Source: RMDB library M2RFPK, as collected in RNAgym. The record gives the reactivity of an RNA of 207 nucleotides to DMS and 2A3. The RNA was probed in 150 mM KOAc, 10 mM MgCl2 and 150 mM bicine (pH 8.5) at 24 C. The 2A3 profile rests on 4,528 reads. The DMS profile rests on 3,677 reads.
RNA sequence: GGGAACGACUCGAGUAGAGUCGAAAAAGAUGGCAGGUUCACCCCGUACGGUGGGGAAGUUCGCGCUUCCGUGAAACGCGAAAAUCGGACGGUGGCUGCAAGUCGCAUCGCAAAACCGCGGCAAGUGUUAACCUGGACCUCUUCGGAGGUCCAGGAACGAAUUACAUGGAUUCGUCCAUGUAAUUCGAAAAGAAACAACAACAACAAC
Reactivity to DMS in 0.01 (KOAc 150mM, MgCl2 10mM, bicine 150mM(pH8.5), 24C), signal-to-noise 2, nucleotides 027 to 156: a120g000a100u010g020g020c040a070g010g010u000u000c100a120c000c010c000c020g040u010a070c050g010g040u000g030g000g010g000a030a110g010u010u000c020g010c040g000c010u010u000c020c200g020u000g010a110a010a000c000g020c000g000a020a050a070a050u000c060g040g020a050c040g010g010u000g000g020c040u000g040c040a100a110g010u020c060g000c020a140u000c060g050c050a030a070a080a150c040c080g010c020g000g000c020a040a120g010u000g000u030u000a090a170c000c000u000g020g000a030c010c010u010c000u010u040c300g030g000a030g020g020u000c010c000a010g000g000a010a050
Reactivity to 2A3 in 0.01 (KOAc 150mM, MgCl2 10mM, bicine 150mM(pH8.5), 24C), signal-to-noise 5, nucleotides 027 to 156: a000g090a070u130g050g030c020a020g030g020u110u130c020a060c000c000c000c000g010u040a030c040g020g040u100g060g060g000g030a020a020g020u040u060c020g010c010g000c040u080u030c060c040g150u120g080a090a040a010c050g010c020g040a050a010a010a050u120c010g000g010a010c030g030g040u070g040g010c030u030g020c040a050a040g020u010c020g010c060a080u070c040g020c110a060a080a040a030c050c060g010c010g030g000c070a110a080g060u020g030u190u080a050a060c000c000u010g000g000a000c000c000u010c000u040u030c110g040g000a000g000g000u000c000c000a000g000g000a000a000